[RMDB]
RNA sequence: GGGAACGACUCGAGUAGAGUCGAAAAGCACUCCUCUCUACCUGUUACCAGUGACACUGUUAAAGAUGAGGACAUGAGAGUUGACAGGUGUAUCAUUAUACACACUGAUAAUGACAGACCUGGGAGGUCCCUAGCUGUGAUUCGUCACAGCUAGGGAAAAAGAAACAACAACAACAAC
Reactivity to 2A3 in 0.01 (KOAc 150mM, MgCl2 10mM, bicine 150mM(pH8.5), 24C), signal-to-noise 2, nucleotides 027 to 126: g010c010a010c030u020c000c010u000c010u010c030u030a020c040c030u010g020u060u050a060c010c010a030g020u020g150a120c070a030c160u070g010u080u090a160a080a000g140a080u140g070a060g000g000a050c030a090u160g020a050g000a020g110u090u110g060a080c020a000g040g000u000g040u030a030u040c020a020u070u100a010u050a060c120a000c040a010c050u020g010a020u020a100a030u050g050a000c000a020g020a110c000c070u030g030g020g030a030g020g120
Reactivity to DMS in 0.01 (KOAc 150mM, MgCl2 10mM, bicine 150mM(pH8.5), 24C), signal-to-noise 3, nucleotides 027 to 126: g000c140a170c080u000c020c000u020c010u000c020u000a130c020c000u000g010u000u010a070c100c070a060g030u000g020a110c130a300c040u010g010u010u000a030a040a030g020a080u010g000a080g010g050a130c120a040u000g010a080g010a050g000u000u000g010a130c010a010g000g010u010g010u010a020u010c060a040u010u010a030u000a050c080a120c150a110c110u010g000a050u000a020a060u000g000a040c040a040g000a030c020c020u000g000g020g020a060g020g000